An RNA of 177 nucleotides, treated with DMS and 2A3 and read out base by base. DMS adducts were read by reverse transcription with MarathonRT. The RNA was probed in 150 mM KOAc, 10 mM MgCl2 and 150 mM bicine (pH 8.5) at 24 C. 2A3 is a SHAPE reagent: it acylates the 2'-hydroxyl of flexible nucleotides of all four kinds.
RNA sequence: GGGAACGACUCGAGUAGAGUCGAAAACUUUUGAAUUUCCGCCAUUGGCGUUCCUGCGCGGGCGGAAAGCACCAGUUCGUCAGGUUCAUUAAAGGGUCACGCCCGAAAGGCCGGAUACAUCCAGCAACGAUGCAAAAUCAUUCGUGAUUUUGCAUCGAAAAGAAACAACAACAACAAC
Reactivity to DMS in 0.01 (KOAc 150mM, MgCl2 10mM, bicine 150mM(pH8.5), 24C), signal-to-noise 3, nucleotides 027 to 126: c040u010u000u000u010g000a070a130u000u000u000c000c000g000c020c000a200u020u010g030g020c000g030u010u000c130c130u010g010c020g020c020g000g000g010c000g010g000a000a020a020g010c080a080c050c040a060g020u000u000c070g000u020c060a060g000g000u010u000c020a090u000u000a050a090a200g000g020g000u000c150a120c180g000c020c000c010g000a050a160a130g000g020c020c000g060g010a080u000a080c130a120u010c000c020a060g000c160a080a190
Reactivity to 2A3 in 0.01 (KOAc 150mM, MgCl2 10mM, bicine 150mM(pH8.5), 24C), signal-to-noise 2, nucleotides 027 to 126: c040u130u100u050u200g100a150a210u000u030u030c010c000g000c020c060a190u070u210g210g020c000g030u120u230c050c000u120g010c010g000c020g030g000g000c030g010g000a000a000a000g000c000a010c040c000a040g030u060u040c010g060u040c010a030g040g060u080u040c040a050u110u210a110a030a070g010g020g010u050c020a010c050g040c000c000c070g020a040a010a020g080g000c020c000g000g000a030u050a060c040a040u030c020c010a020g110c020a120a090